[RMDB]
RNA sequence: GGGAACGACUCGAGUAGAGUCGAAAAUCGGCCGGCCGGCCUAGAAACUUGAGCGGAUAAGUUAGUGGAUCCAACGAAUAUUAGAUUCUAUAUGAAUACGUGCGAUAGCUUACGCGCGAAGUAACAAGGGUAUUAUAAUCUUCGGAUUAUAAUACCCAAAAGAAACAACAACAACAAC
Reactivity to DMS in 0.01 (KOAc 150mM, MgCl2 10mM, bicine 150mM(pH8.5), 24C), signal-to-noise 4, nucleotides 027 to 126: u010c070g010g020c030c010g020g010c040c040g010g000c030c020u000a040g000a090a120a100c050u010u010g000a060g030c030g010g000a080u010a010a040g010u010u010a040g000u010g020g010a050u010c040c080a080a100c050g010a090a050u010a100u040u040a050g010a080u000u000c010u020a050u030a070u040g000a070a050u010a050c060g010u000g020c030g010a090u010a100g020c050u010u020a090c070g000c010g030c020g010a010a050g000u020a030a070c190a040a200
Reactivity to 2A3 in 0.01 (KOAc 150mM, MgCl2 10mM, bicine 150mM(pH8.5), 24C), signal-to-noise 2, nucleotides 027 to 126: u070c010g000g040c000c000g050g000c040c090g090g000c000c000u030a010g050a040a040a000c010u040u050g000a000g020c030g000g060a020u010a010a010g020u020u140a010g000u070g130g020a010u030c000c000a000a000c010g050a100a010u060a110u150u090a100g020a140u070u040c050u090a110u110a010u250g010a000a000u020a000c000g020u020g060c030g010a020u010a040g000c020u000u100a010c020g000c000g000c000g030a020a000g020u040a000a000c030a100a050